[RMDB]
Structure probing data (DMS and 2A3) for a 177-nucleotide construct. For 2A3 the reverse transcriptase was SuperScript II with manganese. It was measured as part of the RMDB library OK2TST. The reactions ran in a buffer of 150 mM KOAc, 10 mM MgCl2 and 150 mM bicine (pH 8.5), at 24 C. The DMS profile rests on 1,913 reads. DMS (dimethyl sulfate) methylates the pairing face of unpaired adenines and cytosines.
RNA sequence: GGGAACGACUCGAGUAGAGUCGAAAAAGGUAUUGCGGUCGCAAAGCAUGAGGCAACCGUGCCUCUACGAGCCUUGAAACAACGCUACACAUAUGAGGUUUCGAGUACGGUAGACACACAGGACAACAGUCCACAGAUUUUUCGAAAUCUGUGGACUAAAAGAAACAACAACAACAAC
Reactivity to DMS in 0.01 (KOAc 150mM, MgCl2 10mM, bicine 150mM(pH8.5), 24C), signal-to-noise 3, nucleotides 027 to 126: a040g000g010u010a080u000u000g000c060g010g010u000c060g020c060a120a050a130g000c090a090u010g020a050g000g000c060a090a110c140c140g010u000g000c030c060u000c020u000a040c090g010a110g040c110c000u010u000g000a110a080a090c070a060a050c110g020c070u010a060c120a120c180a070u010a090u020g010a090g000g010u000u010u000c040g010a110g020u020a060c050g000g000u000a070g010a090c070a050c020a060c070a100g000g010a110c090a020a080c160
Reactivity to 2A3 in 0.01 (KOAc 150mM, MgCl2 10mM, bicine 150mM(pH8.5), 24C), signal-to-noise 2, nucleotides 027 to 126: a000g080g020u110a090u040u130g060c060g010g070u080c030g050c010a030a060a000g020c050a060u110g000a010g020g000c010a000a020c080c030g090u050g010c010c020u010c000u020a010c020g040a020g000c000c000u010u030g040a110a030a020c070a070a070c060g020c030u070a040c050a000c000a090u160a100u200g030a050g070g000u030u130u030c040g010a020g040u030a010c030g000g040u020a030g050a000c030a000c010a000c040a050g090g020a020c000a060a000c000